[RMDB]
RNA sequence: GGGAACGACUCGAGUAGAGUCGAAAACGUCCCCGUCGUACAGAAUGGUAACAUAUCUCUCCAAAUAUCUGAGCUUGGGUAUACGGGGAAACCCAACCCCUUGGGAAGAUUGGGCAUAUGGCUAAAUUACAUCGAUUGUACUUCGGUACAAUCGAAACAGGGACUGUAACUUCGGUUACAGUCCCUGAAAAGAAACAACAACAACAAC
Reactivity to 2A3 in 0.01 (KOAc 150mM, MgCl2 10mM, bicine 150mM(pH8.5), 24C), signal-to-noise 1, nucleotides 027 to 156: c060g060u050c050c020c010c020g100u120c010g030u130a120c080a120g190a100a140u100g120g000u100a090a070c000a020u060a000u000c060u000c030u010c040c030a010a060a210u170a080u050c000u000g000a000g080c020u000u060g010g010g000u010a020u010a060c000g000g000g000g000a050a010a050c000c000c000a000a020c020c000c000c000u000u010g020g010g010a020a000g010a020u000u060g020g000g000c010a010u010a020u090g000g000c030u120a200a210a060u140u130a080c030a070u010c010g000a000u000u000g000u000a000c000u000u060c240g030g010u000a000c000a010a000u000c000g010a000a010a000
The record gives the reactivity of an RNA of 207 nucleotides to 2A3. The RNA was probed in 150 mM KOAc, 10 mM MgCl2 and 150 mM bicine (pH 8.5) at 24 C. The data come from the RNA Mapping Database (RMDB), library M2RFPK. Reactivities are given for positions 27 through 156.